[RMDB]
RNA sequence: GGGAACGACUCGAGUAGAGUCGAAAAGGUGGAGGAGGAUGAAGUUCGCCAUUCAAACAACCCUUUCUGCACCGGUCCUGUGCUGCCCGUUGCCUGCAGGAGCAAAACACACCCACUCCGUGUCCGGCACUCACCCCGUAUUCGUACGGGGUGAGUGAAAAGAAACAACAACAACAAC
Reactivity to DMS in 0.01 (KOAc 150mM, MgCl2 10mM, bicine 150mM(pH8.5), 24C), signal-to-noise 2, nucleotides 027 to 126: g000g030u000g000g000a030g030g000a030g000g030a060u020g010a000a110g000u000u000c060g010c030c070a110u000u010c050a060a100a100c190a100a130c090c010c000u010u000u050c000u000g000c000a020c010c010g000g000u020c020c030u040g000u020g000c010u000g010c020c020c030g000u010u000g010c030c060u030g010c090a060g010g000a060g000c120a020a060a140a080c160a090c100a090c000c040c030a040c040u020c030c030g050u010g010u010c060c030g000g000
Reactivity to 2A3 in 0.01 (KOAc 150mM, MgCl2 10mM, bicine 150mM(pH8.5), 24C), signal-to-noise 3, nucleotides 027 to 126: g030g000u040g030g120a040g030g000a020g030g020a040u060g030a050a020g050u060u070c070g070c060c060a090u070u060c060a030a100a060c060a030a070c020c000c010u010u050u050c030u030g030c020a010c010c000g000g000u000c000c000u020g020u050g060c010u060g030c010c020c000g040u070u100g020c010c000u010g000c010a040g020g040a030g010c000a020a050a060a030c100a010c010a020c020c010c000a010c010u030c010c010g020u020g060u020c000c000g050g000
Source information
This 177-nucleotide RNA was probed chemically with DMS and 2A3. The 2A3 profile rests on 2,301 reads. For 2A3 the reverse transcriptase was SuperScript II with manganese. The data come from the RNA Mapping Database (RMDB), library RFM100. Reactivities are given for positions 27 through 126. The RNA was probed in 150 mM KOAc, 10 mM MgCl2 and 150 mM bicine (pH 8.5) at 24 C. DMS (dimethyl sulfate) methylates the pairing face of unpaired adenines and cytosines.